[RMDB]
RNA sequence: GGGAACGACUCGAGUAGAGUCGAAAAGAUAUGGAGGCGAACGAUAAGCUAGCAUCGGAAACGAUGUAUAGCUUUUGACGUUCGCUCCUAAGUCAAACGUAGAAGAGCGUUCGCGCUCUUCUACGAAUCAUAUGUGCGAGUUCGCUCGCACAUAUGAAAAAGAAACAACAACAACAAC
Reactivity to DMS in 0.01 (KOAc 150mM, MgCl2 10mM, bicine 150mM(pH8.5), 24C), signal-to-noise 4, nucleotides 027 to 126: g010a020u000a210u010g000g010a030g030g000c010g010a010a010c000g000a090u010a020a030g010c010u000a010g000c000a000u000c000g020g000a070a060a130c000g010a010u000g000u000a080u000a000g010c000u000u010u010u010g030a240c040g000u000u000c000g010c000u000c000c000u000a020a130g000u000c020a080a100a230c020g010u000a000g000a020a010g010a010g020c000g010u000u000c240g000c020g000c000u000c000u000u000c000u010a000c000g000a030a060
Reactivity to 2A3 in 0.01 (KOAc 150mM, MgCl2 10mM, bicine 150mM(pH8.5), 24C), signal-to-noise 3, nucleotides 027 to 126: g020a010u060a030u110g000g030a010g110g300c000g000a010a020c010g050a100u070a300a010g000c010u000a000g020c000a000u000c010g020g020a090a020a020c030g010a000u000g020u020a300u020a090g010c000u040u000u020u060g030a010c010g000u000u000c000g000c000u010c000c000u020a070a000g040u020c060a130a050a050c000g000u000a010g000a020a010g000a000g000c010g020u100u150c290g000c010g060c090u010c000u020u000c000u000a000c000g000a000a000